[RMDB]
RNA sequence: GGGAACGACUCGAGUAGAGUCGAAAAACGUGACGCGCUGGGCGGCCAUGGACGAGGCCGGCGGCGGGGCAGCGCACAACAACCUGCAGCCGUAUCUGACCGUCACCUACGUCAUAAAGGCCAAGUGCCUGACGUCAGACUUCGGUCUGACGUCAGGAAAAGAAACAACAACAACAAC
Reactivity to 2A3 in 0.01 (KOAc 150mM, MgCl2 10mM, bicine 150mM(pH8.5), 24C), signal-to-noise 1, nucleotides 027 to 126: a000c060g080u100g030a040c040g090c000g000c100u030g010g030g030c010g000g090c000c000a130u140g090g030a040c050g040a010g000g050c060c020g000g000c020g000g040c010g000g000g030g070c030a000g000c020g070c020a030c030a230a000c000a020a010c060c010u040g000c020a040g030c000c000g040u050a130u110c030u050g120a210c000c000g030u050c010a000c010c000u170a220c000g000u000c010a080u210a110a150a120g000g000c000c010a000a040g060u160g090
Reactivity to DMS in 0.01 (KOAc 150mM, MgCl2 10mM, bicine 150mM(pH8.5), 24C), signal-to-noise 1, nucleotides 027 to 126: a080c070g030u000g000a090c140g050c070g040c020u000g000g000g050c030g020g010c010c010a190u000g000g000a040c110g000a090g000g010c000c000g010g010c000g000g000c000g010g000g010g020c030a080g010c150g000c020a080c120a100a060c180a060a050c010c050u000g000c000a210g010c000c000g000u000a080u020c040u040g000a100c030c030g000u000c040a090c050c010u010a000c050g010u020c020a180u020a070a120a110g010g020c000c020a070a170g050u000g000

Structure probing data (2A3 and DMS) for a 177-nucleotide construct. For DMS the reverse transcriptase was MarathonRT. Reactivities are given for positions 27 through 126. The DMS profile rests on 817 reads.